[RMDB]
RNA sequence: GGGAACGACUCGAGUAGAGUCGAAAAUGUUGGAAGGCAGAUGAUCAGGAAUCUGUACACAGAAAUCAUAUACACUCCAAUACUCGCGCCGGAUGGAUCAAUUAUAAAGAAAUGUAAGGGCAACAACAAACAACUUACUAUUCGUAGUAAGUUGUUUAAAAGAAACAACAACAACAAC
Reactivity to DMS in 0.01 (KOAc 150mM, MgCl2 10mM, bicine 150mM(pH8.5), 24C), signal-to-noise 6, nucleotides 027 to 126: u010g010u000u000g010g010a110a090g020g020c050a020g010a040u000g010a090u020c110a120g000g010a140a060u000c030u010g020u010a100c130a080c080a090g000a100a100a060u000c030a030u000a100u010a080c100a090c050u000c010c030a060a080u000a080c050u010c040g010c120g010c020c040g010g000a070u000g000g000a070u000c060a060a080u000u000a090u010a060a090a100g010a040a070a060u010g010u010a050a060g000g000g010c030a040a020c080a040a060c150
Reactivity to 2A3 in 0.01 (KOAc 150mM, MgCl2 10mM, bicine 150mM(pH8.5), 24C), signal-to-noise 5, nucleotides 027 to 126: u090g010u030u020g030g030a080a050g040g000c010a020g010a060u050g020a050u120c070a070g110g100a100a040u030c020u060g060u110a070c090a010c020a060g080a030a090a010u110c030a000u100a010u020a120c050a010c030u010c000c000a030a030u040a110c020u020c020g010c030g020c010c020g030g010a030u040g030g020a020u030c020a030a070u160u090a130u100a180a150a060g090a060a090a020u080g030u060a020a070g050g000g000c020a030a010c010a000a020c010
The data come from the RNA Mapping Database (RMDB), library OK2TRN. Chemical mapping of a 177-nucleotide RNA with DMS and 2A3. For DMS the reverse transcriptase was MarathonRT. The DMS profile rests on 8,243 reads. Values cover nucleotides 27 to 126.